[RMDB]
RNA sequence: GGGAACGACUCGAGUAGAGUCGAAAAUGCCUACGGCAUGAGUAGCAGCGCCAUGUGAAAAUGUCGGAAAGCUAGGCUGGAGAGCAAAAAUUCGACCCAAACAGUUUUAGCUGUGGAAAUGUUUGUAUAAGGUAAUUCCGUUCGCGGAAUUACCUUAAAAAGAAACAACAACAACAAC
Reactivity to DMS in 0.01 (KOAc 150mM, MgCl2 10mM, bicine 150mM(pH8.5), 24C), signal-to-noise 2, nucleotides 027 to 126: u040g070c040c050u020a060c020g000g000c050a000u020g000a050g010u020a140g000c010a020g040c180g050c170c120a030u060g030u000g000a100a160a160a000u010g010u010c000g010g030a030a140a120g000c040u050a020g000g000c040u000g020g010a140g000a160g000c040a010a040a100a060a110u000u000c100g000a150c080c020c030a030a110a210c060a040g000u030u000u070u010a020g010c000u000g000u010g000g000a030a060a110u010g030u000u000u000g000u020a180